[RMDB]
RNA sequence: GGGAACGACUCGAGUAGAGUCGAAAAAAAAGAUAUGGAGGUCGGGAGCUUGAGGUGCCGCAGAUAAGCAUUCGGAAACGAAUGCUUGUAGGCACCUUCAAGCGAAGAACGACCUCCUAAGUCAAAACUUACGAUUAGACUUCGGUCUAAUCGUAAGAAAAGAAACAACAACAACAAC
Reactivity to DMS in 0.01 (KOAc 150mM, MgCl2 10mM, bicine 150mM(pH8.5), 24C), signal-to-noise 1, nucleotides 027 to 126: a070a080a140a130g020a030u010a300u000g010g010a010g030g000u000c020g000g000g020a120g000c000u000u000g000a010g000g000u000g000c000c010g040c290a080g020a020u000a040a010g000c000a040u000u010c000g000g020a210a050a200c000g000a000a000u000g000c010u000u000g010u000a090g030g020c000a000c000c000u020u010c000a000a020g020c000g010a090a130g030a090a290c010g000a010c020c000u000c000c000u000a000a060g000u010c020a150a060a130a180